The data come from the RNA Mapping Database (RMDB), library RSTRND. Structure probing data (2A3) for a 207-nucleotide construct. Conditions: 150 mM KOAc, 10 mM MgCl2 and 150 mM bicine (pH 8.5), 24 C.

RNA sequence: GGGAACGACUCGAGUAGAGUCGAAAACAAACUAACUGCAAACGACGAACGUUUCGCACUCGCUGCUUAAUAACCAGUGAGCCCUACAACAGCAGGCCGAUGGGCUGGGCAAGGGGUCUUUAGCGCAAGUUGAAGGCUCCCGGCUGUAGGGUCAUACGGAAUUCUCAUUGUUCGCAAUGAGAAUUCCAAAAGAAACAACAACAACAAC
Reactivity to 2A3 in 0.01 (KOAc 150mM, MgCl2 10mM, bicine 150mM(pH8.5), 24C), signal-to-noise 2, nucleotides 027 to 156: c060a010a120a000c040u170a080a070c120u090g040c070a060a070a010c040g180a050c030g090a190a030c010g040u030u030u020c130g000c030a020c020u010c000g000c000u010g010c010u000u030a020a000u020a040a070c010c010a010g000u010g030a000g000c010c000c000u010a010c000a030a010c010a020g050c020a010g030g060c030c000g250a240u300g130g030g000c010u040g010g130g020c060a070a060g020g020g000g000u000c020u010u010u000a000g000c000g000c080a150a030g000u000u000g010a000a000g000g000c010u080c010c000c020g010g030c020u000g010u000a000g010g020g040u060c010a020u080a100c110
Reactivities are given for positions 27 through 156.